[RMDB]
RNA sequence: GGGAACGACUCGAGUAGAGUCGAAAACAUGGAUCGUGAUGCCACCGUCGAGAUCGACAAACCGGUGCUCGACACCGUCGAGGGCGGGAAGAGUGCUCAUGUGUUGAGAAGGUAGUGGACGCGGCGGCGCAGUCGCACUCUUCGGAGUGCGACUGCGAAAAGAAACAACAACAACAAC
Reactivity to 2A3 in 0.01 (KOAc 150mM, MgCl2 10mM, bicine 150mM(pH8.5), 24C), signal-to-noise 2, nucleotides 027 to 126: c070a030u120g190g010a170u020c040g000u060g060a150u130g030c010c020a000c010c000g010u000c000g030a040g060a210u000c030g050a000c060a000a150a000c030c030g030g020u080g030c000u000c000g040a070c060a040c090c020g010u090c100g100a150g010g130g010c020g030g040g010a010a010g030a020g000u060g020c020u020c120a120u260g040u010g040u070u000g030a030g000a080a000g010g000u030a000g020u000g030g000a000c030g000c030g030g030c040g000g010
The record gives the reactivity of an RNA of 177 nucleotides to 2A3. Reactivities are given for positions 27 through 126. The RNA was probed in 150 mM KOAc, 10 mM MgCl2 and 150 mM bicine (pH 8.5) at 24 C.